An RNA of 177 nucleotides, treated with DMS and read out base by base. Source: RMDB library OK2TRN, as collected in RNAgym. Values cover nucleotides 27 to 126. The RNA was probed in 150 mM KOAc, 10 mM MgCl2 and 150 mM bicine (pH 8.5) at 24 C.

[RMDB]
RNA sequence: GGGAACGACUCGAGUAGAGUCGAAAAUGCAGAACCCCCAGUGCGGAUCAUAUACCCUCGCGAUGAGGUGACCUUGAUCGCCGUGACCUUGGAGUGUGUGGUGCUGAUGUGUGAACUGUCUCGGGAGGCUGACGCUAAAUUUCGAUUUAGCGUCAGCAAAAGAAACAACAACAACAAC
Reactivity to DMS in 0.01 (KOAc 150mM, MgCl2 10mM, bicine 150mM(pH8.5), 24C), signal-to-noise 1, nucleotides 027 to 126: u000g020c050a070g000a120a160c060c000c000c060c050a120g020u000g000c040g010g020a030u000c030a040u000a110u010a150c190c000c000u010c040g000c180g110a190u000g000a010g010g020u000g000a210c110c150u000u000g020a030u000c030g000c070c060g010u010g000a080c080c060u020u000g020g020a170g000u000g000u000g040u000g000g010u010g010c050u000g010a060u000g050u000g000u020g010a060a060c100u000g000u000c000u000c030g010g040g020a130g010